[RMDB]
RNA sequence: GGGAACGACUCGAGUAGAGUCGAAAAAAUCCGUUCGCGGAUUAACACGACCUUUGUGAGGAUGUCCGUUGUCAGGAGAAACACUCCCAUUGGGAGUGGAACCUCCUUGGAUUUACGGACUACCCUCACUCUGGUGCUAGGGCCCGUUCGCGGGCAAUAUGUUGUAACCAUUCGUGGUUACAACAUAAAAAGAAACAACAACAACAAC
Reactivity to 2A3 in 0.01 (KOAc 150mM, MgCl2 10mM, bicine 150mM(pH8.5), 24C), signal-to-noise 4, nucleotides 027 to 156: a000a000u020c030c010g010u040u050c300g000c000g090g020a020u090u070a080a030c090a030c200g090a020c000c010u010u010u000g000u030g000a000g010g000a000u010g000u000c000c010g010u010u010g030u000c000a000g000g000a000g000a000a020a000c000a010c020u010c010c040c060a300u300u300g010g000g000a000g010u010g000g000a010a010c000c000u000c000c030u020u080g090g010a050u190u070u190a000c000g000g000a000c000u000a000c000c000c000u000c000a000c000u000c010u000g000g020u040g060c050u130a110g070g120g020c020c050c010g030u060u090c300g000c030g080g000g020c010a020a030
Reactivity to DMS in 0.01 (KOAc 150mM, MgCl2 10mM, bicine 150mM(pH8.5), 24C), signal-to-noise 2, nucleotides 027 to 156: a030a020u000c010c000g030u000u000c270g050c050g010g020a050u000u000a050a110c040a230c060g000a070c010c010u020u010u020g030u000g030a060g020g020a060u000g000u000c000c010g040u000u000g010u000c010a100g000g010a040g020a140a130a160c010a010c020u000c000c000c020a300u000u010g050g010g020a020g050u000g000g000a040a100c130c020u000c010c010u010u000g020g000a080u000u000u010a020c000g000g000a010c010u000a000c030c010c010u010c010a000c010u000c050u000g010g010u000g020c120u000a090g010g030g000c000c000c000g010u000u010c180g000c040g000g010g000c020a020a030